[RMDB]
RNA sequence: GGGAACGACUCGAGUAGAGUCGAAAAGCGGAGGUAAGAGAAAUGAUGUUCACUAUCCCUGAGGAGCGGCCGCCGCGUAUCGACUGUUCAAAACCGCCAACGGCCGCAGUGCUUCCUCGCAAGACUCCCACGGGGUAAAUUUCGAUUUACCCCGUGGAAAAGAAACAACAACAACAAC
Reactivity to 2A3 in 0.01 (KOAc 150mM, MgCl2 10mM, bicine 150mM(pH8.5), 24C), signal-to-noise 1, nucleotides 027 to 126: g000c040g020g020a060g010g010u150a170a050g040a000g100a140a060a050u160g070a050u150g090u140u020c040a020c090u020a090u070c040c000c000u000g040a040g000g000a030g040c010g000g000c000c000g030c010c020g000c000g000u020a020u040c030g110a110c050u140g070u100u020c030a040a050a150a120c020c000g000c000c040a060a070c020g000g020c010c010g000c000a020g010u060g010c020u030u030c010c020u000c000g020c010a040a030g040a050c030u040c060
Reactivity to DMS in 0.01 (KOAc 150mM, MgCl2 10mM, bicine 150mM(pH8.5), 24C), signal-to-noise 2, nucleotides 027 to 126: g000c020g020g010a080g020g000u030a040a100g010a100g010a120a070a090u020g010a110u000g000u010u000c060a100c100u000a100u000c000c010c020u000g000a060g010g010a040g000c000g020g000c000c010g020c140c300g000c080g020u000a080u020c170g000a100c190u010g010u000u020c100a030a050a120a120c170c000g010c010c080a070a090c030g010g010c010c020g020c000a000g000u010g000c020u000u000c010c010u000c030g000c060a150a070g000a090c120u010c090